[RMDB]
RNA sequence: GGGAACGACUCGAGUAGAGUCGAAAAACGACACAAUUCGUUGUGUCGUAAUGGAAAAGGCUAGGACCGGCCAGACUAAGGUCCGAAAAGAUCGAAAGAUCACACGCCACGAAUUCGUUCGUGGCAAAAGAAACUUAGGGUUCGCCCUAAGUUUCUUAAAAGAAACAACAACAACAAC
Reactivity to DMS in 0.01 (KOAc 150mM, MgCl2 10mM, bicine 150mM(pH8.5), 24C), signal-to-noise 2, nucleotides 027 to 126: a010c000g010a050c000a010c000a010a010u010u020c210g040u010u000g000u000g010u000c000g020u000a010a060u000g010g000a080a110a190a140g000g000c000u000a100g000g000a030c000c000g000g020c000c020a170g030a080c140u000a030a070g000g030u000c000c000g010a040a040a120a110g010a010u000c010g000a110a110a180g000a020u000c010a180c190a090c210g010c040c000a000c000g000a020a040u000u000c170g000u000u000c000g050u000g010g000c000a010a010
Reactivity to 2A3 in 0.01 (KOAc 150mM, MgCl2 10mM, bicine 150mM(pH8.5), 24C), signal-to-noise 1, nucleotides 027 to 126: a000c000g000a000c000a000c000a000a040u070u070c160g020u080u030g000u000g000u010c000g000u010a030a070u080g030g050a010a010a100a300g000g000c010u030a060g060g040a000c010c030g020g000c020c040a030g020a000c050u060a080a030g000g000u000c000c010g000a020a010a000a000g000a010u000c000g030a060a030a010g010a020u010c020a000c000a000c140g010c000c000a000c000g010a000a000u070u070c230g020u050u010c000g000u050g000g060c020a000a080
About this RNA: An RNA of 177 nucleotides, treated with DMS and 2A3 and read out base by base. The reactions ran in a buffer of 150 mM KOAc, 10 mM MgCl2 and 150 mM bicine (pH 8.5), at 24 C. The data come from the RNA Mapping Database (RMDB), library M2PK50. For DMS, 1,311 sequencing reads were counted. For DMS the reverse transcriptase was MarathonRT.